The record gives the reactivity of an RNA of 177 nucleotides to 2A3 and DMS. Source: RMDB libraries RFM100 and RFMREP, as collected in RNAgym. For DMS the reverse transcriptase was MarathonRT. For 2A3, 1,220 sequencing reads were counted.
RNA sequence: GGGAACGACUCGAGUAGAGUCGAAAAAGUGAACAAAUUCACUAAAAAAUAAGAUGAAUAAUUAAUUACUUUCAUUGUAAAUUUGUUAUCUUCGUAUAGUACUAAAAGUAUGAGUUAUUAAGCCAUCCAAUAGAAGGAUUUUCGAAUCCUUCUAUUGAAAAGAAACAACAACAACAAC
Reactivity to 2A3 in 0.01 (KOAc 150mM, MgCl2 10mM, bicine 150mM(pH8.5), 24C), signal-to-noise 3, nucleotides 027 to 126: a000g010u020g000a040a000c080a080a300a110u080u010c020a020c000u070a070a000a000a020a030a170u170a070a040g000a010u000g010a100a160u040a030a010u060u080a050a060u110u050a020c020u160u300u120c060a110u180u100g010u030a050a130a200u020u020u050g020u040u030a040u030c020u050u000c010g020u080a030u040a140g070u020a090c030u130a100a120a080a000g030u040a100u030g090a180g050u000u030a080u070u110a150a000g030c020c000a010u010c000
Reactivity to DMS in 0.01 (KOAc 150mM, MgCl2 10mM, bicine 150mM(pH8.5), 24C), signal-to-noise 1, nucleotides 027 to 126: a020g010u000g000a020a140c080a100a090a070u030u000c030a030c010u050a010a000a090a090a050a050u020a050a110g000a050u000g000a120a030u000a030a070u000u010a080a060u040u010a060c010u010u000u060c030a090u070u000g000u000a020a010a080u010u030u000g010u000u000a030u000c020u000u010c080g000u020a060u010a100g000u000a060c020u000a050a020a010a080g000u000a040u010g010a150g010u000u000a050u000u010a060a130g020c110c060a070u020c080